[RMDB]
Conditions: 150 mM KOAc, 10 mM MgCl2 and 150 mM bicine (pH 8.5), 24 C.
The record gives the reactivity of an RNA of 177 nucleotides to DMS.
Source: RMDB library OK2TRN, as collected in RNAgym.
RNA sequence: GGGAACGACUCGAGUAGAGUCGAAAAUGUAGCGAUGCCACACGAGUGUAGGCUACAGUGGGCGACAUAUCCUAAAAGGAAUAGGGUUAUUUGGGCUACAACAUUUGUGGACACCUCAGAUUGAAAGGAGGUACUAAGCGUUCGCGCUUAGUACCUCAAAAGAAACAACAACAACAAC
Reactivity to DMS in 0.01 (KOAc 150mM, MgCl2 10mM, bicine 150mM(pH8.5), 24C), signal-to-noise 1, nucleotides 027 to 126: u010g010u000a010g040c000g010a150u020g080c000c000a110c040a020c150g000a200g000u010g020u000a050g000g000c010u010a050c120a020g020u000g010g040g010c010g010a100c190a110u000a050u000c050c000u010a020a080a210a150g000g010a150a080u000a010g000g000g000u000u000a090u000u000u000g030g000g010c000u000a010c090a060a120c190a060u000u000u010g030u020g000g010a070c060a090c050c020u000c040a040g020a120u000u020g010a070a080a150g000